[RMDB]
RNA sequence: GGGAACGACUCGAGUAGAGUCGAAAAUGAUGGAUUAACAGGGAGAAAGAUAUAUUUACGACACUAUGAUGAGAUGUUUAAUGAGGUGUCUUGCACUCCUUAUUCCGACUUAGCUAUCGUCAAUGUGAAAUAUGAGCAGGUAAAUUUAGCCUUGAAAUCAGACGAUGUAAUUCGUUACAUCGUCUGAAAAAGAAACAACAACAACAAC
Reactivity to DMS in 0.01 (KOAc 150mM, MgCl2 10mM, bicine 150mM(pH8.5), 24C), signal-to-noise 2, nucleotides 027 to 156: u020g010a110u020g010g010a170u000u010a070a080c060a100g000g000g000a070g000a150a070a090g010a090u010a040u010a030u020u020u000a140c060g020a280c030a050c040u000a130u010g020a170u000g010a070g010a110u000g000u000u000u000a040a060u000g000a090g040g010u010g010u000c070u020u000g020c060a080c060u000c030c010u010u000a090u000u000c050c060g010a070c070u000u010a080g010c060u000a130u000c030g020u010c040a050a150u000g050u000g000a050a030a070u000a020u000g010a120g040c060a080g000g020u000a030a030a130u000u010u000a110g010c040c000u000u000g000a050a150a200
Reactivity to 2A3 in 0.01 (KOAc 150mM, MgCl2 10mM, bicine 150mM(pH8.5), 24C), signal-to-noise 3, nucleotides 027 to 156: u170g020a020u090g000g050a050u080u110a120a050c060a070g040g020g010a030g060a040a100a030g060a030u080a020u020a050u100u120u100a070c090g030a020c030a000c030u060a110u170g030a030u050g020a060g030a080u100g070u050u090u070a050a050u050g020a010g070g000u020g000u000c000u020u120g020c050a020c040u020c010c000u000u010a050u060u040c030c030g020a000c050u090u100a010g020c020u060a020u100c040g030u020c030a050a110u100g020u040g070a040a100a010u210a060u090g040a030g030c060a020g010g060u060a040a080a100u110u080u060a010g000c010c010u010u030g050a030a050a060
Chemical mapping of a 207-nucleotide RNA with DMS and 2A3.
For DMS the reverse transcriptase was MarathonRT.
Source: RMDB library OK3TST, as collected in RNAgym.
The DMS profile rests on 4,518 reads.
For 2A3 the reverse transcriptase was SuperScript II with manganese.
The reactions ran in a buffer of 150 mM KOAc, 10 mM MgCl2 and 150 mM bicine (pH 8.5), at 24 C.